[RMDB]
Source: RMDB library VIROID, as collected in RNAgym. An RNA of 177 nucleotides, treated with DMS and 2A3 and read out base by base. DMS adducts were read by reverse transcription with MarathonRT. The reactions ran in a buffer of 150 mM KOAc, 10 mM MgCl2 and 150 mM bicine (pH 8.5), at 24 C. The DMS profile rests on 1,896 reads. Reactivities are given for positions 27 through 126. As a SHAPE reagent, 2A3 marks flexible, mostly unpaired nucleotides at the ribose 2'-OH.
RNA sequence: GGGAACGACUCGAGUAGAGUCGAAAAUGGGGUCGACAACUCUGGGGAGAAAAGGGAGGAUCGGCUGGGAAGAGCAUAUCCUAUGGGAAUCCCUGGCUUCCCCUCACGUCCAGCCCCUCCCCGGUCCGUCCAUAAAGAUGUUCGCAUCUUUAUGGACAAAAGAAACAACAACAACAAC
Reactivity to DMS in 0.01 (KOAc 150mM, MgCl2 10mM, bicine 150mM(pH8.5), 24C), signal-to-noise 3, nucleotides 027 to 126: u000g010g000g020g010u000c260g000a060c190a090a070c120u010c060u020g020g010g000g000a020g000a070a110a120a060g010g000g010a040g000g000a150u000c050g040g000c150u010g000g040g010a020a110g000a100g030c160a070u000a050u000c020c020u000a090u010g010g000g000a270a110u000c000c010c020u000g010g020c200u000u000c010c000c000c010u000c050a030c130g000u000c030c070a160g000c020c010c010c010u000c020c000c000c020g000g010u020c110c100
Reactivity to 2A3 in 0.01 (KOAc 150mM, MgCl2 10mM, bicine 150mM(pH8.5), 24C), signal-to-noise 3, nucleotides 027 to 126: u090g000g000g000g010u040c020g010a000c020a100a030c080u080c150u170g000g020g000g000a030g020a000a020a030a010g020g000g010a000g000g020a050u040c040g070g010c100u120g030g050g050a100a030g070a040g130c030a040u060a060u290c010c010u030a100u170g050g020g020a030a030u020c000c000c000u000g000g010c020u070u040c020c010c010c000u010c000a020c010g000u000c030c010a020g050c000c000c000c000u010c000c010c000c000g030g040u070c030c050